About this RNA:
Conditions: 150 mM KOAc, 10 mM MgCl2 and 150 mM bicine (pH 8.5), 24 C. The record gives the reactivity of an RNA of 207 nucleotides to 2A3.
RNA sequence: GGGAACGACUCGAGUAGAGUCGAAAAGCAAACACGAUAUACGCUGGCGCAUUCAACAUAUAAGGAUACGAUAUUGUCAUCACGCACAACAUCAUGACGCCCAAGAACGUCCAAACAAUGUAUUCAAAUAAUUGCAUUUUGUCUAAUUUAACGUUAACCAUAUGCAGCCGUUCGCGGCUGCAUAUGGAAAAGAAACAACAACAACAAC
Reactivity to 2A3 in 0.01 (KOAc 150mM, MgCl2 10mM, bicine 150mM(pH8.5), 24C), signal-to-noise 2, nucleotides 027 to 156: g050c030a070a160a000c060a060c040g060a010u050a010u020a190c110g010c060u010g010g000c000g000c020a010u050u090c110a080a140c080a010u170a010u080a170a170g100g000a040u040a110c050g020a030u030a050u110u060g070u000c090a060u110c060a040c000g060c000a020c000a130a050c020a090u070c000a010u050g040a080c000g010c020c010c030a190a000g010a010a020c000g000u000c020c020a050a080a000c020a020a010u030g010u060a060u060u060c020a100a000a120u210a030a070u070u100g050c000a000u090u000u000u160g010u000c080u100a120a090u080u040u090a110a000c020g010u000u020a020a000